[RMDB]
RNA sequence: GGGAACGACUCGAGUAGAGUCGAAAAGUUCUGUAAUGGGAUGGGAUCCGAAGCCCCAUUGAGGGAUAAUACAGGCUCUCCCAUCCAACUCCUAUUCCAACACGUCCUCGUCGUACAGAGUGGUAACUAAGGUAUAGCUCCUUCGGGAGCUAUACAAGCUGGAUAUUAACUUCGGUUAAUAUCCAGCAAAAGAAACAACAACAACAAC
Reactivity to DMS in 0.01 (KOAc 150mM, MgCl2 10mM, bicine 150mM(pH8.5), 24C), signal-to-noise 1, nucleotides 027 to 156: g010u010u000c030u000g040u020a050a090u020g000g030g020a000u010g010g010g040a060u010c020c000g010a250a250g000c050c000c010c040a300u000u000g000a140g040g010g000a210u010a060a180u010a050c010a240g000g060c090u000c080u000c020c000c010a010u000c030c010a090a040c010u000c050c030u000a140u000u000c020c030a080a100c060a070c060g010u000c040c050u000c030g030u000c030g000u000a100c040a110g000a080g030u000g010g020u010a010a100c050u020a070a070g040g000u000a020u000a000g010c000u000c000c020u030u000c300g050g000g000a020g040c000u010a000u000a000c000a040a000
Reactivity to 2A3 in 0.01 (KOAc 150mM, MgCl2 10mM, bicine 150mM(pH8.5), 24C), signal-to-noise 2, nucleotides 027 to 156: g010u000u070c050u040g060u160a110a130u140g100g000g000a000u010g000g000g010a060u200c000c010g070a040a000g010c040c040c000c060a060u070u270g060a300g010g000g010a020u010a160a030u130a280c130a050g000g010c000u000c010u000c000c000c010a010u000c010c010a000a000c000u010c000c010u020a080u060u020c040c020a020a030c020a010c110g060u020c000c020u020c010g080u030c010g010u020a000c020a030g070a060g090u060g040g000u060a070a060c020u040a110a090g100g000u000a000u010a000g000c000u000c000c010u000u020c030g020g000g000a000g000c000u010a000u000a010c000a000a000
The data come from the RNA Mapping Database (RMDB), library M2RFPK.
An RNA of 207 nucleotides, treated with DMS and 2A3 and read out base by base.
For 2A3 the reverse transcriptase was SuperScript II with manganese.
The DMS profile rests on 1,586 reads.
The RNA was probed in 150 mM KOAc, 10 mM MgCl2 and 150 mM bicine (pH 8.5) at 24 C.
DMS adducts were read by reverse transcription with MarathonRT.